[RMDB]
RNA sequence: GGGAACGACUCGAGUAGAGUCGAAAAGAAGAGAGAGAGAUAAGGAGAGAGAAUGAGAAACAGGUUCACAUACAGACAGAAUGAACGAGCGUCCUCUUUCAGAUGGAGAAAAGAGUUAGAGACACACUCUGGGAAAGACCUGCCACGGGGACACACACUAGUGAUACCCUUUCGAGGGUAUCACUAGAAAAGAAACAACAACAACAAC
Reactivity to DMS in 0.01 (KOAc 150mM, MgCl2 10mM, bicine 150mM(pH8.5), 24C), signal-to-noise 2, nucleotides 027 to 156: g000a100a080g020a100g030a160g010a100g010a040g020a210u000a060a070g010g020a160g000a070g010a050g000a080a070u020g000a210g000a120a070a080c070a070g010g010u000u000c070a100c050a120u010a270c050a190g040a140c090a130g000a180a070u000g000a080a020c070g000a070g040c070g040u000c050c030u010c030u000u000u000c040a060g010a170u000g010g010a050g000a110a020a050a060g010a070g040u010u000a080g010a230g010a130c040a050c060a060c070u000c050u000g090g000g020a050a080a100g000a050c000c000u000g000c060c060a050c060g000g000g050g010a070c010a030c060a060c080a160
Reactivity to 2A3 in 0.01 (KOAc 150mM, MgCl2 10mM, bicine 150mM(pH8.5), 24C), signal-to-noise 3, nucleotides 027 to 156: g040a070a000g030a000g000a000g000a000g000a000g000a000u050a100a050g010g010a020g000a000g010a010g020a100a090u120g000a050g050a050a120a030c060a030g030g060u070u070c050a040c030a070u170a040c030a060g130a020c010a040g170a120a050u080g010a060a030c080g000a000g040c060g040u000c000c010u030c030u020u110u010c030a030g030a080u110g060g030a040g010a020a080a030a000g040a010g000u050u060a030g020a010g050a060c000a000c010a010c070u030c030u060g010g000g000a030a140a000g020a040c010c000u040g050c000c010a060c050g020g000g000g010a000c000a000c000a010c010a000